[RMDB]
RNA sequence: GGGAACGACUCGAGUAGAGUCGAAAAUCCCUACUGGCGCCGACGCCACAAUCUUGCGGUUGAAUUGCUCAUUCUCUUCCAACUGGAACGCAUUCACUUCCGCAGGCAACAGCAUUUUCCGCUCAAAUAUUAGUUCCUGUUUCGACAGGAACUAAUAAAAAGAAACAACAACAACAAC
Reactivity to DMS in 0.01 (KOAc 150mM, MgCl2 10mM, bicine 150mM(pH8.5), 24C), signal-to-noise 6, nucleotides 027 to 126: u010c000c000c000u010a090c170u020g000g010c040g050c080c100g020a110c080g000c010c030a110c210a130a080u010c030u010u020g000c020g010g020u020u010g000a080a030u000u020g020c010u000c180a220u000u010c060u020c090u020u010c100c100a160a120c210u010g000g010a020a030c160g010c020a070u000u010c070a010c230u020u000c000c000g020c010a000g010g000c270a060a050c090a060g020c050a080u020u000u020u000c020c050g000c060u020c130a080a090a120
Reactivity to 2A3 in 0.01 (KOAc 150mM, MgCl2 10mM, bicine 150mM(pH8.5), 24C), signal-to-noise 9, nucleotides 027 to 126: u010c000c000c000u020a060c050u030g030g010c010g010c050c120g110a140c040g020c020c010a030c020a030a070u050c010u030u040g000c000g010g020u010u020g030a040a030u140u120g010c010u030c060a100u150u020c100u030c020u210u080c080c040a150a150c160u110g020g010a040a010c030g000c010a010u020u020c030a020c060u090u020c010c000g000c000a000g020g000c010a070a060c010a070g050c030a050u060u050u070u050c040c030g030c040u060c090a050a070a030
Structure probing data (DMS and 2A3) for a 177-nucleotide construct.